[RMDB]
RNA sequence: GGGAACGACUCGAGUAGAGUCGAAAAUGAAAGCGGCCAGGUGCUCCCGCUCGGAAAACCGAGCGGUUACUAUGCCCUCGUCACACCUCGCGCGCAGAUGCGGGACGUGGGAGCCACGGAUCUUCGACAACUGUCACCCACCGACGACUGGAUUGUCCUAAUUGUGACUAUUCGUAGUCACAAUUAGAAAAGAAACAACAACAACAAC
Reactivity to 2A3 in 0.01 (KOAc 150mM, MgCl2 10mM, bicine 150mM(pH8.5), 24C), signal-to-noise 2, nucleotides 027 to 156: u080g000a030a080a030g060c050g040g020c080c030a050g020g060u090g100c040u010c020c010c040g000c000u020c010g000g040a100a100a160a240c000c000g000a010g000c000g030g000u060u070a010c030u070a060u270g000c000c000c000u020c000g040u010c000a040c020a020c070c000u020c020g000c000g000c030g010c050a020g020a120u130g090c030g030g010g020a010c020g010u100g020g030g040a030g040c010c010a040c010g050g020a080u060c060u080u060c040g020a020c000a090a030c040u050g030u070c020a040c030c020c000a020c040c050g120a100c040g010a010c040u050g050g020a170u060u050g010u000c000